[RMDB]
RNA sequence: GGGAACGACUCGAGUAGAGUCGAAAACUGCCGCCGAGACGCAGUGAUCCUCGCAGGGUCGCACGGUCGCCUCGGGUCGGCCUCGUGUCGGCUCGACCUGCGAGGGGAGCGAGUGGCGAGCCCGACCAAAACUUUCUCGCCUUCGGGCGAGAAAGAACAAACAUUUAGCCUUCGGGCUAAAUGUUUGAAAAGAAACAACAACAACAAC
Reactivity to 2A3 in 0.01 (KOAc 150mM, MgCl2 10mM, bicine 150mM(pH8.5), 24C), signal-to-noise 2, nucleotides 027 to 156: c000u000g020c000c000g000c000c010g120a090g030a130c000g040c030a110g180u000g010a000u000c000c040u000c000g010c010a010g000g020g040u180c040g040c080a050c070g000g030u020c000g020c010c010u020c000g000g010g000u020c000g000g020c000c000u140c100g300u300g020u010c000g000g000c010u000c050g070a090c020c010u010g000c010g000a000g000g000g000g010a020g000c000g000a050g040u190g030g000c010g020a040g020c030c030c040g020a030c010c050a010a080a040a130c000u000u000u000c000u010c000g020c010c010u030u040c170g050g000g020c000g000a000g000a000a000a000g000a000a040
Source: RMDB library M2RFPK, as collected in RNAgym. The record gives the reactivity of an RNA of 207 nucleotides to 2A3. Values cover nucleotides 27 to 156. The RNA was probed in 150 mM KOAc, 10 mM MgCl2 and 150 mM bicine (pH 8.5) at 24 C. Reactivities are rounded to 0.1 and cut off at 0 and 3.